[RMDB]
RNA sequence: GGGAACGACUCGAGUAGAGUCGAAAACAGCAAUUCGUUCAUUACAAGCAACUGGUUUAGAGGUAACAGCAAUUCGUGACGUAACUCCAGUCCCUCAUAAUGGAUGUCGCCCUCCAAAACGCCGUCACAUUAUUAGGAGCUUCGGCUCCUAAUAAUGAAAAGAAACAACAACAACAAC
Reactivity to 2A3 in 0.01 (KOAc 150mM, MgCl2 10mM, bicine 150mM(pH8.5), 24C), signal-to-noise 4, nucleotides 027 to 126: c020a000g070c030a000a120u120u080c060g020u080u040c040a040u110u150a060c020a110a060g050c020a040a050c040u040g010g120u070u100u140a080g030a020g030g050u050a050a020c010a010g020c030a050a070u140u080c060g050u070g010a010c010g050u050a050a020c000u010c010c020a020g020u000c000c000c000u030c010a070u140a160a050u070g020g030a010u040g030u030c020g020c010c000c000u040c020c010a060a120a030a040c050g010c050c000g060u060c010a020
Reactivity to DMS in 0.01 (KOAc 150mM, MgCl2 10mM, bicine 150mM(pH8.5), 24C), signal-to-noise 6, nucleotides 027 to 126: c060a090g000c100a080a090u010u000c080g020u000u000c060a100u010u000a060c100a070a080g010c070a060a070c050u010g010g010u000u000u000a060g010a090g020g010u000a050a060c070a070g010c080a060a100u000u010c110g010u000g000a070c060g020u000a080a070c100u000c010c010a080g000u000c020c070c020u000c080a070u010a070a070u010g000g000a060u000g010u010c060g010c020c020c010u000c030c060a030a020a080a110c120g000c060c030g000u000c080a170
The record gives the reactivity of an RNA of 177 nucleotides to 2A3 and DMS.
Conditions: 150 mM KOAc, 10 mM MgCl2 and 150 mM bicine (pH 8.5), 24 C.
For DMS the reverse transcriptase was MarathonRT.